Annotation:
The record gives the reactivity of an RNA of 177 nucleotides to DMS and 2A3. Values cover nucleotides 27 to 126. Conditions: 150 mM KOAc, 10 mM MgCl2 and 150 mM bicine (pH 8.5), 24 C. For 2A3, 911 sequencing reads were counted. For DMS, 2,196 sequencing reads were counted.
RNA sequence: GGGAACGACUCGAGUAGAGUCGAAAAAUCUGCAAAAUAAGAACCCUGUCUUACCAGUGGAAUCGUUGGUAGGGGAGUCUCCUGGACCAAGGCACAUUUUGCAAUGAGCUCUUCUACAAAAUGACAAUGUAGUACCUACUUUCGAGUAGGUACUACAAAAAGAAACAACAACAACAAC
Reactivity to DMS in 0.01 (KOAc 150mM, MgCl2 10mM, bicine 150mM(pH8.5), 24C), signal-to-noise 2, nucleotides 027 to 126: a040u000c080u010g020c040a000a010a030a050u010a100a140g010a090a230c020c030c020u000g000u010c040u010u000a050c040c000a070g010u000g000g020a110a050u000c100g020u010u000g020g050u000a040g000g000g000g000a040g020u010c020u000c090c050u000g000g010a080c090c080a030a040g000g010c090a060c140a070u010u000u000u010g000c020a040a080u000g000a080g010c050u000c010u000u000c010u000a040c050a060a040a070a060u020g000a120c150a060a090
Reactivity to 2A3 in 0.01 (KOAc 150mM, MgCl2 10mM, bicine 150mM(pH8.5), 24C), signal-to-noise 1, nucleotides 027 to 126: a000u040c010u000g020c000a040a030a040a070u100a050a050g030a110a050c050c000c000u020g070u030c040u000u070a040c010c020a000g000u080g170g130a120a120u210c070g090u090u080g020g000u010a000g000g040g030g010a040g040u030c010u050c070c040u040g100g080a150c090c070a000a010g020g000c010a040c000a050u040u140u070u010g010c030a030a110u180g010a040g030c000u020c020u080u030c050u120a070c030a030a100a000a070u070g040a060c050a060a180